Structure probing data (DMS and 2A3) for a 177-nucleotide construct.
[RMDB]
RNA sequence: GGGAACGACUCGAGUAGAGUCGAAAAAGGGACUGUCGUCUCGGUUCGCGAUCCACAAGUAAUCUUUUGUGGAGAUUAUGAAAACAAUCAUCACGAGAGGCUACGUGUGGGUGGCAAACAAAGACGAGUAAAUUACAAGGUUCGCCUUGUAAUUUACAAAAGAAACAACAACAACAAC
Reactivity to DMS in 0.01 (KOAc 150mM, MgCl2 10mM, bicine 150mM(pH8.5), 24C), signal-to-noise 3, nucleotides 027 to 126: a070g020g020g020a200c110u000g010u010c000g020u010c000u010c300g000g030u000u000c030g020c010g000a010u000c000c000a010c000a060a050g000u000a010a010u010c000u010u000u000u000g010u000g010g000a030g000a010u000u000a100u010g020a120a090a110a070c200a020a010u000c010a040u000c010a010c000g000a030g010a010g010g000c070u000a000c010g000u000g010u000g010g020g040u020g000g030c010a010a010a010c010a030a050a020g000a010c010g010a080
Reactivity to 2A3 in 0.01 (KOAc 150mM, MgCl2 10mM, bicine 150mM(pH8.5), 24C), signal-to-noise 2, nucleotides 027 to 126: a000g070g000g020a060c060u070g010u100c010g010u000c000u000c020g000g000u010u020c020g000c000g080a000u000c000c000a000c010a000a020g010u010a010a030u010c000u010u010u020u000g010u020g030g020a030g010a010u030u030a090u170g210a080a090a020a020c050a010a020u000c010a020u000c010a010c010g010a010g000a000g030g020c010u000a010c020g020u010g010u000g020g000g000u000g160g000c000a000a000a010c000a020a040a000g010a000c010g010a020
Background
In probing experiments dimethyl sulfate is read out at A N1 and C N3, which are open when not base-paired. It was measured as part of the RMDB library RFMREP. For 2A3, 6,614 sequencing reads were counted.